[RMDB]
RNA sequence: GGGAACGACUCGAGUAGAGUCGAAAACUGUAGCAUGUCAGAUGCUGUUCUGAGCACUUCUCAAUGUCCUCACCUCCGCUGUAUUCUCAUAACAAUCCCCACUUUACAGAUGAGAGGACUGAGGCAGGUGUAAUUCAAACUUCGGUUUGAAUUACACAAAAGAAACAACAACAACAAC
Reactivity to 2A3 in 0.01 (KOAc 150mM, MgCl2 10mM, bicine 150mM(pH8.5), 24C), signal-to-noise 3, nucleotides 027 to 126: c030u050g030u140a020g000c010a040u060g110u300c070a070g010a160u050g070c040u050g060u110u050c060u070g040a030g000c030a030c080u100u040c020u010c000a060a210u090g030u110c020c000u000c000a010c000c000u020c000c020g040c000u000g000u030a040u050u060c080u010c090a200u180a300a230c110a190a240u220c000c000c000c020a020c010u030u020u000a010c000a090g050a280u030g080a140g000a000g200g030a020c120u040g000a010g000g000c000a010g070
Reactivity to DMS in 0.01 (KOAc 150mM, MgCl2 10mM, bicine 150mM(pH8.5), 24C), signal-to-noise 4, nucleotides 027 to 126: c100u000g000u000a070g030c020a060u000g020u010c110a050g000a060u000g010c050u000g000u010u010c060u000g000a050g000c070a090c090u000u010c020u010c040a070a110u000g010u000c000c000u000c000a080c020c000u000c000c000g020c000u000g010u000a030u000u010c080u010c130a120u010a100a100c210a090a160u020c020c010c000c050a060c160u000u000u000a030c000a010g010a080u000g000a170g020a010g010g010a080c230u000g010a010g000g020c040a040g010